[RMDB]
RNA sequence: GGGAACGACUCGAGUAGAGUCGAAAAGUCGUCGGUGACUAGCACCCAGUUGACCGCGUGGCCGCGAGCGAGGUGAACCUUGUCGGUGAUCUGAACAAGCUCCGCCAUGCCCGCGAGUCUAGGAGCGGUCAUACGGUUCGUUCGCGAACCGUAUGACAAAAGAAACAACAACAACAAC
Reactivity to 2A3 in 0.01 (KOAc 150mM, MgCl2 10mM, bicine 150mM(pH8.5), 24C), signal-to-noise 9, nucleotides 027 to 126: g020u020c040g020u040c110g070g170u300g020a020c020u010a020g050c040a090c010c010c010a030g090u080u120g030a010c000c010g020c040g090u240g010g000c030c020g020c020g000a010g000c010g020a060g020g010u010g000a020a030c020c000u100u180g270u280c100g000g030u070g050a070u040c010u030g040a090a060c060a120a040g010c010u050c060c010g030c010c010a040u160g000c000c000c000g010c010g050a070g040u010c030u050a060g020g100a100g050c040g000
Reactivity to DMS in 0.01 (KOAc 150mM, MgCl2 10mM, bicine 150mM(pH8.5), 24C), signal-to-noise 9, nucleotides 027 to 126: g010u010c000g010u050c180g010g020u040g000a030c010u000a110g010c170a140c010c000c010a140g000u020u000g010a030c000c010g020c010g020u030g000g010c020c100g000c020g000a040g000c010g020a180g000g000u000g000a200a070c180c000u000u030g000u020c150g010g020u020g010a200u020c030u000g020a130a080c130a040a130g010c060u000c090c050g020c030c060a080u030g000c010c010c010g000c010g000a130g010u010c010u010a070g010g000a130g010c040g000